[RMDB]
RNA sequence: GGGAACGACUCGAGUAGAGUCGAAAAACGCAGAGUAUCGUUAAGAUGUCCAUAUUGUUGUUUUAGGCCCGCUAGUAAUGCGCUACGGGUAUUUAAUAUUGUUAAACCCUGAUAAUCGCUCCGGUUAACCAUACAUUCACUUCGGUGAAUGUAUGGUAAAAGAAACAACAACAACAAC
Reactivity to DMS in 0.01 (KOAc 150mM, MgCl2 10mM, bicine 150mM(pH8.5), 24C), signal-to-noise 2, nucleotides 027 to 126: a050c060g000c080a090g000a070g010u010a020u010c030g000u030u000a140a120g010a080u000g000u000c010c030a120u040a130u000u000g010u000u000g000u000u000u000u000a100g020g010c060c000c010g040c290u010a050g010u010a070a090u000g000c100g000c020u000a030c040g000g020g000u000a010u010u000u000a000a070u000a130u020u000g010u010u010a050a070a030c100c020c020u000g010a110u000a050a060u010c040g010c040u000c080c070g000g000u000u010a080
The record gives the reactivity of an RNA of 177 nucleotides to DMS.